[RMDB]
RNA sequence: GGGAACGACUCGAGUAGAGUCGAAAAACAGCUUUUCUACUUACUGGCUACAAAACUCUGGGCAACUAACUCCUCUAACUUCUAGUUGCCUCUUUUGCAAAGCUGAUUGUGAAGAGUUGAUAGGGAGGCUUAAAUGAAAGAGGAUUAAUUUAUUCAAUACUCGUAUUACUUUCGAGUAAUACGAGUAAAAAGAAACAACAACAACAAC
Reactivity to 2A3 in 0.01 (KOAc 150mM, MgCl2 10mM, bicine 150mM(pH8.5), 24C), signal-to-noise 2, nucleotides 027 to 156: a000c020a010g020c000u080u070u030u020c020u110a060c010u040u020a070c020u080g040g000c000u050a020c070a010a070a050a030c070u050c090u060g000g010g000c000a000a000c020u060a020a020c050u100c070c010u070c030u060a050a070c020u140u070c020u090a000g000u030u010g000c010c000u020c010u020u040u060u040g000c010a000a050a000g010c030u040g020a150u060u130g030u050g060a030a090g030a010g020u030u050g060a080u110a030g000g030g000a010g010g000c010u110u140a070a100a040u160g050a080a070a010g030a030g010g050a010u030u110a070a130u100u100u150a140u050u120c020a080a050
Reactivity to DMS in 0.01 (KOAc 150mM, MgCl2 10mM, bicine 150mM(pH8.5), 24C), signal-to-noise 2, nucleotides 027 to 156: a070c070a080g000c000u000u000u010u000c030u010a070c030u000u000a090c050u000g000g030c020u000a090c000a010a080a090a050c100u010c100u010g020g020g000c020a030a040c020u000a040a090c070u000c030c050u010c120u030a140a110c050u010u010c010u000a070g020u000u000g000c020c010u000c010u000u000u010u000g000c030a090a060a070g010c010u000g020a110u010u000g010u000g020a060a060g000a070g020u000u000g000a140u010a140g000g000g030a020g000g020c040u020u000a010a050a110u000g000a080a060a100g010a060g030g010a090u010u010a060a080u000u000u010a060u020u000c020a050a280